[RMDB]
RNA sequence: GGGAACGACUCGAGUAGAGUCGAAAAUCCCUGCUUCGGCAGGGAAAAGUAAAAUAAGAAUUUAUCGAACAGACCUGUUUUGACAGGAGCUGCCGUGUGGCGGCAAAAACAUCCAGUUCGCUGGAUGCAUACUAAGAGUGUUCGCACUCUUAGUAUGAAAAGAAACAACAACAACAAC
Reactivity to DMS in 0.01 (KOAc 150mM, MgCl2 10mM, bicine 150mM(pH8.5), 24C), signal-to-noise 6, nucleotides 027 to 126: u000c000c000c000u000g010c000u000u020c180g040g010c000a020g020g000g000a000a020a040a120g000u010a050a050a070a070u010a080a110g000a140a110u000u010u000a040u010c050g010a150a130c150a120g000a140c010c000u000g000u000u010u010u010g020a040c010a010g010g000a130g010c000u000g010c010c000g010u010g030u020g020g010c000g000g030c020a020a030a040a070a090c000a010u000c000c000a010g010u000u010c250g020c000u000g000g010a000u000g000
Reactivity to 2A3 in 0.01 (KOAc 150mM, MgCl2 10mM, bicine 150mM(pH8.5), 24C), signal-to-noise 6, nucleotides 027 to 126: u000c000c000c000u010g000c000u020u070c210g110g000c010a000g040g000g000a050a070a000a010g030u040a000a060a080a140u190a100a060g090a090a100u120u180u120a160u260c060g030a060a040c020a060g110a130c000c000u010g070u030u140u160u220g170a020c020a000g000g030a060g010c010u010g010c020c020g200u270g130u190g080g000c010g000g000c000a050a040a000a010a010c000a000u000c010c000a000g020u050u050c140g040c070u000g000g000a000u000g010